Chemical mapping of a 177-nucleotide RNA with DMS and 2A3. DMS adducts were read by reverse transcription with MarathonRT. Values cover nucleotides 27 to 126.
RNA sequence: GGGAACGACUCGAGUAGAGUCGAAAACAAGUGUUGGUCACAUUUCACAUCAAUUGAAUUUAUCUCAAUCAAAUGUCUCGCACCAAUUAAAAUUACUUAAAAGUGUGCAUCUUGUGAAAGCAAAACGCAACCUGAUCUAGUUCGCUAGAUCAGGUUGAAAAGAAACAACAACAACAAC
Reactivity to DMS in 0.01 (KOAc 150mM, MgCl2 10mM, bicine 150mM(pH8.5), 24C), signal-to-noise 2, nucleotides 027 to 126: c070a120a090g000u010g000u010u000g020g000u000c040a080c030a020u010u000u010c140a070c020a010u000c080a080a080u010u000g000a030a050u010u010u020a080u030c130u010c020a010a030u000c050a080a110a090u000g000u000c180u000c150g000c060a020c030c030a040a130u000u000a060a090a120a050u000u010a100c160u000u000a040a080a160a200g000u000g000u000g000c060a150u000c030u020u000g040u000g000a040a050a050g010c110a040a050a110a070c180g000
Reactivity to 2A3 in 0.01 (KOAc 150mM, MgCl2 10mM, bicine 150mM(pH8.5), 24C), signal-to-noise 2, nucleotides 027 to 126: c020a070a090g040u020g050u150u070g040g070u100c040a000c010a090u030u090u090c070a040c020a050u050c040a050a150u030u080g020a020a030u060u230u160a200u080c060u020c050a050a070u000c010a000a200a060u060g050u000c070u040c180g000c010a010c020c000a030a050u020u090a040a080a050a060u190u170a090c060u050u080a170a080a040a000g150u190g010u010g060c050a050u030c020u000u020g030u030g030a020a010a040g030c020a000a050a050a060c030g020